[RMDB]
RNA sequence: GGGAACGACUCGAGUAGAGUCGAAAAGACACUCAGUUCGCUGAGUGUCAAAUAAUAUCAGCGGUUAAAAACGAGGCGUUAUAACCGCUGAACGCCUCGUUAAAAGAACCAAGUUCGCUUGGUUCAACUGAUUACUUAAGUUCGCUUAAGUAAUCAGAAAAGAAACAACAACAACAAC
Reactivity to 2A3 in 0.01 (KOAc 150mM, MgCl2 10mM, bicine 150mM(pH8.5), 24C), signal-to-noise 5, nucleotides 027 to 126: g000a000c000a000c000u000c000a020g030u060u070c110g030c130u000g000a000g000u000g000u000c000a000a000a000u010a000a010u040a040u060c020a010g040c020g080g050u100u150a150a120a030a010a010c020g020a060g140g020c030g000u020u030a070u030a100a030c010c020g010c010u000g000a000a000c010g010c000c000u030c020g020u020u090a020a050a010a060g000a000a000c000c000a000a000g010u020u070c190g000c090u000u000g000g000u000u000c000a000a020
Reactivity to DMS in 0.01 (KOAc 150mM, MgCl2 10mM, bicine 150mM(pH8.5), 24C), signal-to-noise 8, nucleotides 027 to 126: g000a010c000a000c000u000c000a000g020u010u010c240g030c000u000g000a020g010u000g010u000c000a010a060a050u000a090a080u010a080u000c040a040g010c030g010g000u010u010a030a060a060a040a010c010g010a080g000g010c030g010u000u000a130u000a050a080c030c030g010c040u000g000a010a020c070g010c010c000u000c070g020u000u000a050a070a090a120g000a010a010c000c000a010a010g010u000u010c250g010c010u000u000g000g000u000u000c010a060a140
Chemical mapping of a 177-nucleotide RNA with 2A3 and DMS. Conditions: 150 mM KOAc, 10 mM MgCl2 and 150 mM bicine (pH 8.5), 24 C. For 2A3 the reverse transcriptase was SuperScript II with manganese.